[RMDB]
RNA sequence: GGGAACGACUCGAGUAGAGUCGAAAAGCCACUACACAGAGUGAGACUCCGUUUCAAACAAAACAAAACAAAACAAAACAAAAACCACACACACACAAACAAAACAAAAACCAAAAGGUAUUACAAAGAUAUAGUAAUUAAAACAUGUGGUACCAGCCGACAGGCUAUCUUUCGAGAUAGCCUGUCGAAAAGAAACAACAACAACAAC
Reactivity to 2A3 in 0.01 (KOAc 150mM, MgCl2 10mM, bicine 150mM(pH8.5), 24C), signal-to-noise 2, nucleotides 027 to 156: g020c000c010a010c020u050a040c040a010c040a020g070a030g050u030g030a040g000a050c010u010c020c070g010u030u030u060c100a100a130a030c070a060a040a010a010c090a060a080a000a000c020a040a070a050a020c070a050a050a030a000c020a020a090a120a010a000c030c150a000c040a010c020a020c010a020c050a010c140a090a080a010c000a010a060a110a000c050a000a070a290a020a010c060c030a050a080a050a000g010g000u060a010u040u030a010c020a040a200a040g010a040u170a020u110a220g020u050a130a190u170u170a060a140a070a010c030a050u120g000u000g020g000u000a030c010c000a000g150c100

Structure probing data (2A3) for a 207-nucleotide construct. For 2A3, 1,465 sequencing reads were counted.